[RMDB]
RNA sequence: GGGAACGACUCGAGUAGAGUCGAAAAAUCAGCCUUCGUUCUGCAAACGGGGUUGGAUCCGACUCUCAUAGGCUCUCCAACCCAACUCCUACUCAAUACGUCCUCGUCGUACAGAACGGUAACAUGUAAAACGAAGGCUGCUUCGGCAGCCUUCGAACUAUUCAAUUGAGUUCGCUCAAUUGAAUAGAAAAGAAACAACAACAACAAC
Reactivity to DMS in 0.01 (KOAc 150mM, MgCl2 10mM, bicine 150mM(pH8.5), 24C), signal-to-noise 1, nucleotides 027 to 156: a200u000c030a080g000c020c000u010u000c000g030u020u000c020u040g000c000a250a100a100c070g010g020g030g010u010u000g000g000a020u000c020c020g040a100c050u000c060u000c150a110u030a100g000g000c030u000c040u020c020c030a090a100c020c060c000a030a020c020u000c030c030u000a060c040u020c030a090a150u000a070c070g020u000c000c040u010c000g040u010c070g010u010a100c010a030g040a050a030c000g030g040u000a050a160c100a160u000g000u010a050a080a000a210c030g000a030a010g020g050c010u000g000c010u000u010c300g060g000c050a020g030c000c010u010u000c000g030a000a090
Reactivity to 2A3 in 0.01 (KOAc 150mM, MgCl2 10mM, bicine 150mM(pH8.5), 24C), signal-to-noise 3, nucleotides 027 to 156: a000u070c040a020g050c000c020u060u080c010g000u000u000c030u060g050c040a120a030a050c050g000g020g000g030u000u000g010g010a060u250c000c010g070a040c030u050c010u040c090a160u150a210g000g000c000u020c000u000c040c010a020a010c000c000c000a000a020c010u020c010c020u040a050c010u010c130a060a090u070a130c030g100u070c010c070u030c060g080u020c010g000u020a030c010a030g040a040a020c010g010g030u050a030a030c030a050u160g070u200a070a070a000a040c000g000a000a000g000g000c000u000g000c000u020u020c090g100g000c010a000g000c010c000u000u000c000g010a010a000
This 207-nucleotide RNA was probed chemically with DMS and 2A3.
For DMS the reverse transcriptase was MarathonRT.
2A3 is a SHAPE reagent: it acylates the 2'-hydroxyl of flexible nucleotides of all four kinds.